[RMDB]
RNA sequence: GGGAACGACUCGAGUAGAGUCGAAAACGGUUACGCCUUCUUUACCGUUAUCAAGGAAGGUACUCGGCCAUGCCAAGGGAAGCAUUAUUCCUUAGGCGCAUGUCGCCGCCAGCAUGGUGUGAGGGGAAAAAGUAUGCUGGGUUCGCCCAGCAUACAACACGCAUUAACUCUUCGGAGUUAAUGCGUGAAAAGAAACAACAACAACAAC
Reactivity to DMS in 0.01 (KOAc 150mM, MgCl2 10mM, bicine 150mM(pH8.5), 24C), signal-to-noise 1, nucleotides 027 to 156: c020g030g020u000u000a030c070g040c010c000u000u000c000u000u010u000a000c000c000g000u000u000a020u030c090a010a030g030g020a010a000g030g010u000a030c030u000c000g010g010c000c000a060u010g050c000c020a150a230g020g010g030a050a070g090c230a100u010u000a130u000u010c000c000u000u010a070g020g000c010g000c000a080u010g030u010c010g050c020c000g040c120c080a120g000c030a020u000g010g000u020g020u000g060a050g010g000g020g000a080a070a090a130a150g000u000a000u000g010c030u000g020g020g010u000u010c300g060c020c000c010a040g000c000a000u010a000c020a050a150
Reactivity to 2A3 in 0.01 (KOAc 150mM, MgCl2 10mM, bicine 150mM(pH8.5), 24C), signal-to-noise 4, nucleotides 027 to 156: c010g010g010u030u020a030c070g010c000c000u000u000c010u040u040u050a030c000c030g250u120u060a040u100c070a000a010g030g000a000a000g000g010u030a050c010u000c000g020g000c000c000a000u000g010c010c040a090a090g000g000g000a020a020g000c160a190u060u150a110u240u140c000c010u030u050a100g010g000c010g000c010a070u120g120u240c020g010c020c000g000c010c020a000g000c000a010u010g020g000u080g110u160g070a050g030g010g010g100a010a140a020a000a010g000u000a000u000g000c010u000g000g000g000u010u040c090g110c010c000c000a000g000c000a000u000a000c000a000a000

Overview:
An RNA of 207 nucleotides, treated with DMS and 2A3 and read out base by base. For 2A3, 4,126 sequencing reads were counted. The reactions ran in a buffer of 150 mM KOAc, 10 mM MgCl2 and 150 mM bicine (pH 8.5), at 24 C.